Record summary:
The record gives the reactivity of an RNA of 177 nucleotides to DMS and 2A3. The reactions ran in a buffer of 150 mM KOAc, 10 mM MgCl2 and 150 mM bicine (pH 8.5), at 24 C.
RNA sequence: GGGAACGACUCGAGUAGAGUCGAAAAGAUAUGGAACAUCCACGAGGCUAUGAAGUCGGAAACGAUGGAGCCUUAGUGGAGUGUUCCUAAGUCAAAAGGUAAGUGAACGUUCGCGUUCACUUACCAAGCUAUUCCCGAAGUUCGCUUCGGGAAUAGCAAAAGAAACAACAACAACAAC
Reactivity to DMS in 0.01 (KOAc 150mM, MgCl2 10mM, bicine 150mM(pH8.5), 24C), signal-to-noise 1, nucleotides 027 to 126: g000a030u010a300u010g000g000a000a010c010a040u010c000c000a000c010g000a000g000g000c000u000a250u000g020a200a160g000u030c010g010g000a130a060a280c010g030a000u000g010g000a000g000c000c000u010u000a000g000u000g000g000a000g010u000g010u000u000c020c000u020a030a110g010u010c030a130a070a110a090g000g030u000a000a000g000u020g000a000a000c030g020u000u000c260g030c090g000u000u000c000a000c000u000u000a000c010c000a000a000
Reactivity to 2A3 in 0.01 (KOAc 150mM, MgCl2 10mM, bicine 150mM(pH8.5), 24C), signal-to-noise 1, nucleotides 027 to 126: g020a000u070a050u110g000g010a000a000c000a020u010c010c010a000c030g000a020g000g060c010u030a140u300g000a020a040g020u000c010g000g050a110a050a020c000g000a000u050g050g030a020g010c000c000u000u030a060g000u010g020g000a020g000u010g010u000u000c010c000u000a040a010g100u040c060a000a030a100a180g040g000u010a010a000g000u020g010a000a010c010g010u020u080c300g020c020g100u020u000c040a000c000u010u000a000c000c000a000a000